[RMDB]
RNA sequence: GGGAACGACUCGAGUAGAGUCGAAAACAACUGGCUGUGCACACACGACCGUUCCGACACACAAAAAGACUCGUCAAAGAAGACGAAAUGUGUGAUAGCCAGUACGUGAACGGUCGACAAAACAAAACGCACUAGUACACUUCGGUGUACUAGUGCGAAAAGAAACAACAACAACAAC
Reactivity to 2A3 in 0.01 (KOAc 150mM, MgCl2 10mM, bicine 150mM(pH8.5), 24C), signal-to-noise 3, nucleotides 027 to 126: c030a000a060c000u000g030g080c010u030g030u130g100c070a050c010a050c000a040c140g000a000c000c000g000u000u000c020c040g140a040c020a060c000a000c020a080a110a000a030a030g090a180c080u020c000g000u010c070a280a130a220g200a130a020g000a110c000g040a010a020a020u060g000u000g010u030g030a020u050a030g000c010c000a000g010u000a000c100g100u170g000a000a000c000g000g010u000c010g010a040c080a030a040a020a000c050a050a160a050a000